RNA sequence: GGGAACGACUCGAGUAGAGUCGAAAAGAUAUGGAUGGGUGAGUGGGAGUCCGGUGUCGGAAACGACACCAGGACAUCGAUCACUACCCAUCCUAAGUCAAAACUGGGCAUCUUCGGAUGCCCAGAAUCCUUAAUAAAAGUUCGCUUUUAUUAAGGAAAAAGAAACAACAACAACAAC
Reactivity to 2A3 in 0.01 (KOAc 150mM, MgCl2 10mM, bicine 150mM(pH8.5), 24C), signal-to-noise 1, nucleotides 027 to 126: g000a000u010a000u040g000g010a000u010g030g030g030u130g270a100g000u020g000g160g120a190g000u000c000c000g000g000u000g010u010c000g030g000a040a000a000c010g000a000c010a030c000c040a000g010g000a000c010a000u140c140g100a130u060c000a000c000u010a000c000c000c000a010u010c000c000u000a000a000g000u000c010a010a010a100a200c030u030g000g010g010c000a000u000c010u100u050c260g200g040a000u000g010c060c000c020a010g000a010a010
Reactivity to DMS in 0.01 (KOAc 150mM, MgCl2 10mM, bicine 150mM(pH8.5), 24C), signal-to-noise 3, nucleotides 027 to 126: g010a010u000a100u020g000g000a020u010g000g000g010u000g020a030g040u000g010g000g030a220g040u010c000c000g000g000u000g010u000c000g000g010a040a010a040c000g000a010c000a000c010c010a030g050g000a000c000a070u010c300g000a110u000c000a010c000u000a060c000c000c000a000u000c000c000u000a000a040g000u000c010a110a080a120a270c020u000g000g010g020c000a010u010c000u000u000c270g020g000a000u000g000c000c000c000a010g010a050a090
Chemical mapping of a 177-nucleotide RNA with 2A3 and DMS. Source: RMDB library TTRDES, as collected in RNAgym.